[RMDB]
RNA sequence: GGGAACGACUCGAGUAGAGUCGAAAAUGCAGAUAAUGGUGCAUUUGAGGCCAGGAUAGUCAUGGAUUCCUGAGUACAAGGACAGUGGCUCAUUGUUGCUAAGGAUCCCAACUCAAAUUACCAACACUGGACUGAAAACACAAACUAAGCAUUGUGACGGGAUCCAUUAUUUCGAUAAUGGAUCCCGAAAAGAAACAACAACAACAAC
Reactivity to 2A3 in 0.01 (KOAc 150mM, MgCl2 10mM, bicine 150mM(pH8.5), 24C), signal-to-noise 2, nucleotides 027 to 156: u020g010c010a000g040a110u110a180a090u220g000g000u010g010c010a070u000u000u070g020a000g030g020c090c020a050g000g070a080u170a060g060u110c050a080u160g010g010a050u070u030c010c020u000g010a070g050u070a100c020a020a070g000g020a000c030a070g070u080g040g040c000u000c050a110u010u140g070u090u110g000c020u030a050a020g060g010a030u050c020c010c020a020a040c000u030c060a000a050a120u090u120a010c080c030a000a030c010a050c120u040g040g000a050c020u050g020a020a000a140a020c040a000c000a040a080a000c040u160a000a080g040c060a040u000u110g010u030g050a050